RNA sequence: GGGAACGACUCGAGUAGAGUCGAAAAGCCGACGAGCCGCUAGAGGAGAUAGUCGAGGCGUUCUGCGCGAGCAAGGCCAGCAGUAAGUACAGGUUGGUGCUCACAGGCGAUUAUGGUAGGGCGCGGCAUUUCGACGCAAGUUCGCUUGCGUCGAAAUAAAAGAAACAACAACAACAAC
Reactivity to DMS in 0.01 (KOAc 150mM, MgCl2 10mM, bicine 150mM(pH8.5), 24C), signal-to-noise 1, nucleotides 027 to 126: g040c060c010g000a140c140g010a080g020c050c010g030c020u000a100g020a250g000g000a090g020a090u010a060g000u000c020g000a060g010g010c020g010u000u000c030u000g020c050g030c040g030a060g010c000a060a100g020g010c040c050a070g010c030a080g000u010a040a110g000u010a050c070a090g020g000u000u010g000g000u010g010c000u000c020a100c170a090g000g000c030g000a060u000u010a000u000g010g020u020a060g000g000g020c030g010c030g010g030c100